This 207-nucleotide RNA was probed chemically with 2A3. The 2A3 profile rests on 881 reads. Values are in units of 0.01, from 0 to 300, in steps of 10. Conditions: 150 mM KOAc, 10 mM MgCl2 and 150 mM bicine (pH 8.5), 24 C. It was measured as part of the RMDB library M2RFPK. 2A3 adducts were read by reverse transcription with SuperScript II with manganese.

[RMDB]
RNA sequence: GGGAACGACUCGAGUAGAGUCGAAAAGUCGGAACAUAACGACGGCGGGCCGGUGGGGAAUCAGGGGGCUACCGUGGGAUAGCGAUGACACAGCCCCUCCGAUGGCACCAAGCGUCGGAUCGCGGAAAACACUGUAAGCCCUUCGGGGCUUACAGAACGAAGAUAUAGACUUCGGUCUAUAUCUUCGAAAAGAAACAACAACAACAAC
Reactivity to 2A3 in 0.01 (KOAc 150mM, MgCl2 10mM, bicine 150mM(pH8.5), 24C), signal-to-noise 1, nucleotides 027 to 156: g010u000c010g030g060a180a090c060a190u290a170a000c030g000a020c000g070g010c050g000g000g000c070c090g010g050u100g080g000g010g040a000a090u080c060a100g020g010g000g020g000c010u060a060c070c040g010u060g040g000g080a030u140a070g020c000g020a020u080g020a030c020a020c010a130g040c000c040c020c000u000c000c010g030a030u050g140g000c010a020c020c040a120a000g030c000g010u010c050g020g000a020u070c030g000c060g030g010a000a150a000a000c080a010c000u000g000u000a000a000g000c000c000c000u010u050c160g050g020g000g000c000u010u000a000c000a000g000a000a000